[RMDB]
RNA sequence: GGGAACGACUCGAGUAGAGUCGAAAAACACUGAAAGGUGCGUCAUACUUGAUGCCCCCGGCCUACUGCGCGAGGUGGGCAUUUCAGAUGCUAUUGUAAACAACUUUUUCCUUUCGGGUGGUGAGGCCCGUCAUGGAGUGUUCGCACUCCAUGACGGAAAAGAAACAACAACAACAAC
Reactivity to DMS in 0.01 (KOAc 150mM, MgCl2 10mM, bicine 150mM(pH8.5), 24C), signal-to-noise 1, nucleotides 027 to 126: a050c040a020c050u010g000a010a040a040g050g040u010g040c090g000u000c010a030u020a170c240u020u000g030a020u000g000c010c000c000c010c090g010g000c000c040u000a090c240u010g010c150g020c030g060a090g030g000u010g000g000g000c010a040u000u010u030c170a030g020a020u000g010c030u030a090u010u000g030u000a060a060a090c170a060a060c170u000u000u000u000u050c000c030u000u010u000c010g000g000g000u030g000g030u000g010a110g000g000c090
Reactivity to 2A3 in 0.01 (KOAc 150mM, MgCl2 10mM, bicine 150mM(pH8.5), 24C), signal-to-noise 1, nucleotides 027 to 126: a000c030a010c020u080g010a040a040a020g000g000u030g000c010g010u050c020a060u030a300c030u100u120g010a000u020g010c000c000c000c020c000g080g000c010c000u200a210c060u160g050c140g000c030g080a120g040g050u170g070g030g000c010a000u000u050u040c020a020g030a100u030g010c050u030a090u170u090g100u100a140a090a000c030a050a040c060u140u120u040u050u150c000c000u040u040u070c050g000g040g200u050g010g130u150g050a070g050g140c000